[RMDB]
RNA sequence: GGGAACGACUCGAGUAGAGUCGAAAAAGAAGCAAUGGGUGGCUUUGACUGGACGCACUGGGCAGUGGCCUAUCUGCAUAACCGCCCUAUCAUCUACGAGUAUCGCACCAAGAUGCUCGGCGUAAUGGUACUCGAGUUAUUUCGAUAACUCGAGUACAAAAGAAACAACAACAACAAC
Reactivity to DMS in 0.01 (KOAc 150mM, MgCl2 10mM, bicine 150mM(pH8.5), 24C), signal-to-noise 3, nucleotides 027 to 126: a160g010a060a090g020c100a080a090u010g010g030g020u000g010g010c070u000u000u030g010a120c090u000g020g020a050c130g010c060a030c090u000g010g020g040c090a210g010u000g030g000c010c020u000a060u000c080u000g020c080a100u000a040a040c040c010g020c010c010c010u000a070u010c110a080u000c060u000a100c010g020a030g000u000a010u000c010g000c150a250c250c210a080a150g000a010u000g010c000u020c030g000g000c170g010u000a070a060u010g010
Reactivity to 2A3 in 0.01 (KOAc 150mM, MgCl2 10mM, bicine 150mM(pH8.5), 24C), signal-to-noise 3, nucleotides 027 to 126: a030g090a040a000g040c080a040a070u070g000g020g030u020g040g040c060u120u050u070g070a120c040u070g070g020a030c070g050c150a050c060u050g020g100g000c110a130g070u070g220g000c010c000u020a050u040c040u040g030c000a010u050a120a050c010c010g020c000c010c010u050a090u080c050a040u020c030u100a070c000g020a000g000u010a000u000c020g020c080a090c080c010a060a040g000a010u010g000c010u020c010g010g000c030g080u090a180a120u110g080